This 177-nucleotide RNA was probed chemically with 2A3 and DMS. Values cover nucleotides 27 to 126. The RNA was probed in 150 mM KOAc, 10 mM MgCl2 and 150 mM bicine (pH 8.5) at 24 C. For 2A3 the reverse transcriptase was SuperScript II with manganese.

[RMDB]
RNA sequence: GGGAACGACUCGAGUAGAGUCGAAAACCUGAAACGUCUUCCCUGAUACUCCGAUUGGCGCUGCAAGACAGCACUUGCAGGGUCAAGAGCUCGGUGAAGUCGGCUGAAUACACUCGCUGUAUCGACACAGAUGUGCAACGUUCGCGUUGCACAUCUGAAAAGAAACAACAACAACAAC
Reactivity to 2A3 in 0.01 (KOAc 150mM, MgCl2 10mM, bicine 150mM(pH8.5), 24C), signal-to-noise 3, nucleotides 027 to 126: c010c010u040g010a150a110a030c030g010u000c000u000u000c010c020c000u000g010a010u030a170c000u000c020c070g200a210u020u100g080g000c300g010c070u010g000c000a000a010g020a090c090a160g050c120a120c070u000u000g000c000a040g090g010g000u020c000a000a000g010a000g010c000u020c010g040g000u020g010a000a000g000u010c000g010g000c020u080g030a030a050u060a010c040a000c030u090c070g110c160u000g000u010a000u010c040g110a040c040a000
Reactivity to DMS in 0.01 (KOAc 150mM, MgCl2 10mM, bicine 150mM(pH8.5), 24C), signal-to-noise 1, nucleotides 027 to 126: c000c010u000g020a160a050a180c010g000u000c000u000u010c000c050c000u000g020a040u000a210c050u000c090c220g000a300u000u050g090g010c000g000c090u000g000c000a010a000g000a180c180a110g000c280a090c000u000u000g000c000a000g000g000g000u000c000a010a020g000a000g000c300u000c000g000g050u000g000a000a000g000u000c000g000g010c050u040g000a010a060u000a060c060a010c020u000c030g040c100u000g000u000a000u000c000g000a170c290a300